[RMDB]
RNA sequence: GGGAACGACUCGAGUAGAGUCGAAAAACGCUUCACAAUGUGCGGCAAAGAAACAUUGUUUAUGCAAAGGCACUUCGCAAUGUGUGCUCAAACAUUGCUUAAUCAAACACGCUUCACAAUGUGCGACAAAACUUCACGGUCUUCGGACCGUGAAGAACAAGGCCUAUGGCUUCGGCCAUAGGCCUUGAAAAGAAACAACAACAACAAC
Reactivity to 2A3 in 0.01 (KOAc 150mM, MgCl2 10mM, bicine 150mM(pH8.5), 24C), signal-to-noise 3, nucleotides 027 to 156: a000c000g000c010u010u010c000a020c020a000a000u010g010u000g000c010g100g060c110a120a100a060g100a000a030a000c010a020u000u000g070u050u090u090a070u100g050c050a130a100a030g170g000c000a000c000u010u020c070g000c020a000a030u030g010u000g030u000g030c110u090c230a050a060a000c010a000u000u010g000c000u030u130a090a040u150c090a020a040a030c100a010c070g070c020u110u070c060a020c030a160a240u200g040u080g020c020g030a030c080a020a080a020a030c010u010u000c000a000c000g020g000u010c000u000u070c150g100g000a010c010c000g000u000g000a000a000g000a000a000